[RMDB]
RNA sequence: GGGAACGACUCGAGUAGAGUCGAAAAUAGCGAAGUAGGAUUUUAUGCGUCAAGUGUUCACAGGCUGGGGAGUCGCCGUGAAACGAAAAGCAGAAAACGUGCUGCUUACGAUAUAAUUUCCGCACCCAUAAGAAGUCUCUGUUCGCAGAGACUUCAACCGAAGGACAAGGUUCGCCUUGUCCUUCGGAAAAGAAACAACAACAACAAC
Reactivity to 2A3 in 0.01 (KOAc 150mM, MgCl2 10mM, bicine 150mM(pH8.5), 24C), signal-to-noise 1, nucleotides 027 to 156: u100a000g000c010g110a110a030g050u160a060g050g000a010u020u070u000u000a000u020g010c000g010u020c050a090a060g010u020g100u110u020c020a030c100a080g020g000c070u090g080g040g120g010a060g080u110c020g000c000c000g000u000g000a040a020a000c010g000a010a020a020a020g000c000a000g070a020a150a030a010c170g050u140g080c000u000g000c000u000u000a010c020g020a010u010a000u000a080a000u000u010u020c000c000g010c000a010c010c000c000a050u160a080a040g010a000a000g000u020c000u000c000u000g030u040u040c200g010c060a000g000a000g000a000c050u000u000c000a000a020